[RMDB]
RNA sequence: GGGAACGACUCGAGUAGAGUCGAAAAGAAAGAAAUCAAAGCGGAUUCUAGUCUAAUCGGAGAGACUAGCAUCGAAUAACUCGUUCUUGAAUAUCCGUAUUAGAUCUAACUGAGGGAUGAGUAGAAAGGGUUACAUACUGUUCGCAGUAUGUAACCCAAAAGAAACAACAACAACAAC
Reactivity to 2A3 in 0.01 (KOAc 150mM, MgCl2 10mM, bicine 150mM(pH8.5), 24C), signal-to-noise 2, nucleotides 027 to 126: g100a010a050a020g090a070a140a000u070c110a080a100a000g080c050g040g000a010u010u000c000u010a000g000u000c000u020a030a090u130c060g080g010a080g000a000g000a020c000u010a000g000c000a000u040c000g040a080a040u060a070a040c010u000c030g030u030u030c000u050u030g060a080a050u040a030u040c000c000g000u030a040u010u170a060g010a020u020c070u150a000a060c030u070g000a080g020g020g000a010u000g010a000g000u060a010g110a050a020a060
Reactivity to DMS in 0.01 (KOAc 150mM, MgCl2 10mM, bicine 150mM(pH8.5), 24C), signal-to-noise 2, nucleotides 027 to 126: g000a120a090a090g000a070a040a050u000c020a010a090a120g000c050g010g000a010u000u000c040u000a000g000u000c000u000a040a120u020c100g000g010a080g000a030g000a040c000u000a000g000c120a000u060c120g010a090a060u060a100a120c080u030c050g010u000u000c000u000u000g020a150a040u010a060u000c020c000g020u010a040u000u000a050g000a060u050c100u050a030a210c160u000g000a170g010g000g000a000u000g000a010g010u000a030g030a120a150a060
Source information
The record gives the reactivity of an RNA of 177 nucleotides to 2A3 and DMS. The reactions ran in a buffer of 150 mM KOAc, 10 mM MgCl2 and 150 mM bicine (pH 8.5), at 24 C. The 2A3 profile rests on 2,145 reads. DMS adducts were read by reverse transcription with MarathonRT. Values cover nucleotides 27 to 126.